[RMDB]
RNA sequence: GGGAACGACUCGAGUAGAGUCGAAAACACAGACCAAGGUAUCGUGCCACGGCAUGUUCCACCUUGGCCAUUUGGUCACGGUCCAGAUAGUCGACCGGAUCGCCGUGCACAUAGACGAUGCAAUAAAGACUUCUGUCUGCUUCGGCGGACAGAAGUCAAAAGAAACAACAACAACAAC
Reactivity to 2A3 in 0.01 (KOAc 150mM, MgCl2 10mM, bicine 150mM(pH8.5), 24C), signal-to-noise 4, nucleotides 027 to 126: c100a000c010a030g060a060c020c000a020a020g040g000u060a030u190c070g000u010g050c070c020a020c030g040g000c070a070u180g060u120u020c000c010a000c000c000u010u050g000g000c000c010a120u090u100u210g020g010u030c050a040c250g000g040u010c030c020a090g140a190u140a040g120u120c040g020a040c040c000g000g000a020u030c030g010c030c030g000u000g000c040a010c000a090u080a010g070a030c090g030a060u080g010c000a020a090u030a060a080a040
Reactivity to DMS in 0.01 (KOAc 150mM, MgCl2 10mM, bicine 150mM(pH8.5), 24C), signal-to-noise 2, nucleotides 027 to 126: c080a070c250a000g000a120c050c010a040a040g000g020u000a080u000c110g000u030g000c100c020a060c130g000g000c000a030u010g030u020u010c050c080a000c180c120u000u000g050g000c020c000a020u010u010u010g000g000u050c000a120c080g030g000u000c000c040a240g050a070u000a140g000u000c140g000a000c040c030g000g000a000u030c130g000c040c070g050u010g000c020a050c020a130u080a070g000a050c120g000a030u000g020c070a160a060u030a120a060a060